[RMDB]
Chemical mapping of a 177-nucleotide RNA with 2A3 and DMS.

RNA sequence: GGGAACGACUCGAGUAGAGUCGAAAAGGAUGCUCGUUCGCGAGCAUCCACUGAGAUAGCCACUAUAAAGAUUAAGUCUUGCUACUCGAGACAGGAUGUCUAUGCUCCUGGCCUUCGGGCCAGGAAAGCCAGUAUUUAAGUUCGCUUAAAUACUGGCAAAAGAAACAACAACAACAAC
Reactivity to 2A3 in 0.01 (KOAc 150mM, MgCl2 10mM, bicine 150mM(pH8.5), 24C), signal-to-noise 6, nucleotides 027 to 126: g000g000a000u000g000c020u010c000g030u070u100c240g000c010g110a000g000c000a000u000c000c000a000c010u040g020a010g020a040u060a020g070c050c050a060c060u120a070u120a270a130a030g070a070u140u190a190a040g100u010c020u050u070g020c000u020a010c000u000c000g010a000g020a030c060a020g110g080a100u120g060u090c030u080a110u150g080c010u020c010c000u000g000g000c000c000u020u030c180g060g010g000c000c000a000g000g000a000a000a000
Reactivity to DMS in 0.01 (KOAc 150mM, MgCl2 10mM, bicine 150mM(pH8.5), 24C), signal-to-noise 5, nucleotides 027 to 126: g000g010a000u000g010c010u000c000g020u000u010c220g030c020g010a020g020c000a010u010c000c000a020c100u010g000a190g020a060u000a070g010c090c120a060c130u010a090u010a050a050a050g000a050u000u000a090a090g000u000c010u000u000g010c010u000a020c010u000c000g010a030g010a100c110a090g010g010a100u000g000u010c020u000a110u000g010c130u000c000c000u000g000g000c000c010u000u010c200g020g010g000c000c000a010g000g010a000a010a070